This 207-nucleotide RNA was probed chemically with 2A3 and DMS. Conditions: 150 mM KOAc, 10 mM MgCl2 and 150 mM bicine (pH 8.5), 24 C. The data come from the RNA Mapping Database (RMDB), library M2RFOK. For 2A3, 5,142 sequencing reads were counted. DMS adducts were read by reverse transcription with MarathonRT. Reactivities are rounded to 0.1 and cut off at 0 and 3.
RNA sequence: GGGAACGACUCGAGUAGAGUCGAAAAACAUGCUGGCCAACCCAACCCCACGAUCCUCCAUCGGCAUGAUCAUGAAGUGUUCUCAAAUAUCAGGCCAGUAAAUCACCAUGCUCGUGCUGGUAAAGGCAACUUAUGCCCAAGUUCGCUUGGGCAUAAAACUUACCAAUAAGUUCGCUUAUUGGUAAGUAAAAGAAACAACAACAACAAC
Reactivity to 2A3 in 0.01 (KOAc 150mM, MgCl2 10mM, bicine 150mM(pH8.5), 24C), signal-to-noise 5, nucleotides 027 to 156: a010c080a030u080g000c000u000g010g010c000c010a000a040c060c030c040a060a070c040c010c010c030a050c080g070a150u060c010c030u030c040c040a040u040c020g000g000c000a010u010g010a010u000c000a010u010g070a180a040g010u000g030u070u010c050u020c040a090a120a030u230a120u120c090a060g000g000c010c000a000g010u000a010a080a040u110c010a010c030c000a000u000g000c000u010c010g010u000g010c010u000g000g000u060a150a140a010g030g010c020a030a030c060u030u010a000u010g000c000c000c000a010a000g000u020u050c090g020c140u000u010g040g000g000c000a000u000a000a000a000
Reactivity to DMS in 0.01 (KOAc 150mM, MgCl2 10mM, bicine 150mM(pH8.5), 24C), signal-to-noise 2, nucleotides 027 to 156: a040c050a090u000g020c020u000g020g050c020c030a130a120c090c030c060a150a140c030c000c010c010a080c120g010a090u000c020c030u000c040c020a020u000c040g030g000c030a030u010g010a050u030c020a060u000g010a060a110g020u000g000u010u000c040u000c030a080a070a140u000a120u010c090a080g010g000c000c000a040g010u000a050a070a060u020c040a080c010c010a040u000g000c110u000c040g020u000g020c010u000g020g010u000a030a030a040g010g010c070a050a060c080u000u010a010u000g000c020c000c020a020a020g040u000u010c300g030c030u000u000g020g000g040c020a020u010a000a010a070